The record gives the reactivity of an RNA of 207 nucleotides to 2A3. Source: RMDB library RSTRND, as collected in RNAgym. Values cover nucleotides 27 to 156.
RNA sequence: GGGAACGACUCGAGUAGAGUCGAAAAGGACAUCCUUACAGCUCAAGCUACCAACUUGUCGCAGAAAUGCUGGCAAGGGCCGGGGUAAUGACCCAGGGUAUGGUAAAAACGCUUGAGAUUGGAUAAUCCGCAGCCAAGCACCUUACCCGGAUUCAACCAUAAUCUUGAGCUUCGGCUCAAGAUUAUGAAAAGAAACAACAACAACAAC
Reactivity to 2A3 in 0.01 (KOAc 150mM, MgCl2 10mM, bicine 150mM(pH8.5), 24C), signal-to-noise 1, nucleotides 027 to 156: g000g020a020c000a020u000c000c000u050u050a040c110a060g020c000u010c000a000a000g000c000u000a000c000c050a000a040c010u000u000g000u010c010g050c000a000g030a040a070a010u050g020c190u220g000g050c010a010a020g000g000g030c000c000g020g000g000g020u090a180a180u200g050a050c000c000c040a000g070g010g000u280a300u300g000g000u010a000a000a000a010a020c040g010c000u000u000g000a000g000a000u000u020g020g010a010u020a060a050u030c010c040g000c020a010g030c030c000a090a000g060c020a060c010c010u010u130a060c000c000c000g130g040a260u130u070c080a080a060c030